Chemical mapping of a 177-nucleotide RNA with DMS and 2A3. For DMS, 4,770 sequencing reads were counted. Values cover nucleotides 27 to 126. For DMS the reverse transcriptase was MarathonRT.

RNA sequence: GGGAACGACUCGAGUAGAGUCGAAAACGAUUAGCAUUCGUGCUAAUCGAAUCAGGUAGUACCUAUCUCUAUUACCUGUAGUGGCCAACGACCGGACAGAGAAUCGAGUCCUGUUCGCAGGACUCAAGCAAUAGUAUGUCUUCGGACAUACUAUUGCAAAAGAAACAACAACAACAAC
Reactivity to DMS in 0.01 (KOAc 150mM, MgCl2 10mM, bicine 150mM(pH8.5), 24C), signal-to-noise 4, nucleotides 027 to 126: c030g000a010u000u000a000g010c000a050u000u020c200g020u000g010c000u000a010a010u000c000g010a080a060u000c020a020g000g000u000a010g010u000a060c170c100u000a130u000c100u020c090u000a010u010u000a020c010c000u000g010u010a080g000u000g010g010c040c020a040a080c070g000a080c070c030g000g000a070c140a120g000a110g000a060a100u010c150g000a010g010u000c000c000u000g010u000u020c200g020c020a020g000g010a010c000u000c010a030a090
Reactivity to 2A3 in 0.01 (KOAc 150mM, MgCl2 10mM, bicine 150mM(pH8.5), 24C), signal-to-noise 5, nucleotides 027 to 126: c020g000a000u000u010a000g000c010a010u010u050c230g090u060g000c010u000a000a000u000c010g010a010a090u070c010a000g020g000u020a010g020u020a050c020c030u120a140u160c070u000c000u050a030u050u020a010c000c000u010g000u030a070g050u050g080g020c030c020a060a040c070g070a050c030c030g030g040a030c050a060g090a010g050a100a120u200c120g000a010g010u000c010c000u020g020u020u050c280g010c050a000g000g000a000c000u000c000a000a000